[RMDB]
RNA sequence: GGGAACGACUCGAGUAGAGUCGAAAAGUAGAGUGUAUCAUGUCAGUAAGCAUGCCGGGGAAUGGUGGUUUACCCCGUUAUCAAAUGAUUACCGACCAAUAAUUGGCGAAACUCGUAUCGCGUUGGCAAAGUCACGGCGUGUUCGCACGCCGUGAAACACUUACGAUACUUUCGAGUAUCGUAAGUGAAAAGAAACAACAACAACAAC
Reactivity to DMS in 0.01 (KOAc 150mM, MgCl2 10mM, bicine 150mM(pH8.5), 24C), signal-to-noise 4, nucleotides 027 to 156: g010u010a100g020a090g020u010g020u000a080u000c030a100u000g020u000c030a030g020u000a030a100g020c040a060u000g020c240c040g030g010g030g000a060a110u000g020g010u000g020g020u000u000u000a240c010c000c010c020g020u000u010a070u000c230a090a060a080u010g000a070u000u000a030c020c020g010a040c020c100a050a090u000a060a140u010u000g030g030c020g000a100a090a060c050u000c040g020u000a060u010c020g010c070g030u000u000g000g000c080a040a080a160g000u020c010a020c030g000g020c010g060u000g010u000u000c300g040c010a030c030g010c010c010g050u010g000a020a040a110
Reactivity to 2A3 in 0.01 (KOAc 150mM, MgCl2 10mM, bicine 150mM(pH8.5), 24C), signal-to-noise 8, nucleotides 027 to 156: g130u150a020g030a050g060u110g010u060a060u110c030a040u060g070u070c040a030g080u110a100a010g020c020a010u060g050c040c000g010g000g000g010a030a040u050g020g010u030g010g030u020u030u110a070c000c010c000c000g040u050u030a020u040c030a030a040a020u070g020a020u050u060a030c020c030g050a080c030c060a030a010u180a120a080u120u120g050g000c010g020a060a080a050c120u120c110g070u090a070u060c030g010c030g040u000u020g040g010c080a130a050a030g050u000c000a000c000g000g000c000g000u020g020u040u050c110g020c060a000c000g000c000c010g000u000g000a000a000a000
Structure probing data (DMS and 2A3) for a 207-nucleotide construct. 2A3 adducts were read by reverse transcription with SuperScript II with manganese. The 2A3 profile rests on 10,680 reads. The reactions ran in a buffer of 150 mM KOAc, 10 mM MgCl2 and 150 mM bicine (pH 8.5), at 24 C. It was measured as part of the RMDB library M2RFPK. As a SHAPE reagent, 2A3 marks flexible, mostly unpaired nucleotides at the ribose 2'-OH.